[RMDB]
Chemical mapping of a 207-nucleotide RNA with 2A3.
The reactions ran in a buffer of 150 mM KOAc, 10 mM MgCl2 and 150 mM bicine (pH 8.5), at 24 C.
For 2A3 the reverse transcriptase was SuperScript II with manganese.
RNA sequence: GGGAACGACUCGAGUAGAGUCGAAAAUUAUGUUAUAAACGGUCAUUCAAAUGUAGAUUUACCAAUAGUGCAAAGAGUUAGUUGGGUUGCUAAAAUUGGUAAUGUAGUGCCUAAUAUAUCUAGUCAAAAACAAACAUAUGUAGCUUUAGAUAUUAACACAACCUGUACUCUUCGGAGUACAGGUUGUAAAAGAAACAACAACAACAAC
Reactivity to 2A3 in 0.01 (KOAc 150mM, MgCl2 10mM, bicine 150mM(pH8.5), 24C), signal-to-noise 1, nucleotides 027 to 156: u150u000a060u120g010u000u000a070u190a250a050a020c070g000g000u140c000a040u020u040c060a040a060a170u180g010u130a090g010a050u050u050u000a000c000c000a000a070u010a090g160u080g030c010a060a090a000g030a010g040u130u000a000g000u000u010g060g000g010u000u100g000c000u050a130a100a100a100u000u030g000g010u070a010a010u060g040u120a060g000u000g020c000c000u010a060a000u140a010u010a000u110c000u010a090g000u000c010a000a040a180a150a090c070a000a250a120c060a020u110a020u270g030u000a000g000c000u080u140u000a020g000a020u100a030u250u270a000a290c190